Structure probing data (DMS and 2A3) for a 177-nucleotide construct.
The 2A3 profile rests on 927 reads.
Conditions: 150 mM KOAc, 10 mM MgCl2 and 150 mM bicine (pH 8.5), 24 C.
Source: RMDB library OK2TST, as collected in RNAgym.
DMS adducts were read by reverse transcription with MarathonRT.
[RMDB]
RNA sequence: GGGAACGACUCGAGUAGAGUCGAAAAGCCGCAAGUUCGGUGCCUUGCUUGAUGGCGCGCUUGGCGUCCAACUCGGCGGCAACCGCCGCGCCACCGAUGAUGUGCGGGUUAAUGCCGUGCCGGCGCAUACACUUAGGUCCUUCGGGACCUAAGUGUAAAAAGAAACAACAACAACAAC
Reactivity to DMS in 0.01 (KOAc 150mM, MgCl2 10mM, bicine 150mM(pH8.5), 24C), signal-to-noise 2, nucleotides 027 to 126: g030c010c010g030c000a180a050g020u000u000c170g030g000u010g000c050c010u020u000g000c050u000u000g020a070u000g000g010c030g000c130g000c020u000u000g020g020c000g000u000c000c070a050a060c060u000c100g030g030c010g000g000c110a050a050c090c050g010c140c130g050c040g020c030c020a150c110c050g000a170u000g030a100u010g010u000g000c000g010g000g000u000u000a090a130u000g000c020c010g010u000g000c010c140g020g010c010g020c080a150
Reactivity to 2A3 in 0.01 (KOAc 150mM, MgCl2 10mM, bicine 150mM(pH8.5), 24C), signal-to-noise 1, nucleotides 027 to 126: g040c000c000g020c030a050a000g040u050u060c020g040g000u000g020c020c030u030u080g020c030u070u200g040a080u200g110g130c050g000c000g030c120u010u040g040g000c000g010u000c000c000a000a040c020u060c150g130g010c000g000g010c000a000a020c020c010g050c060c070g000c010g030c010c000a090c070c120g260a230u140g050a030u100g120u050g000c030g020g000g000u030u100a220a050u240g060c000c000g010u030g040c020c070g010g000c000g000c010a010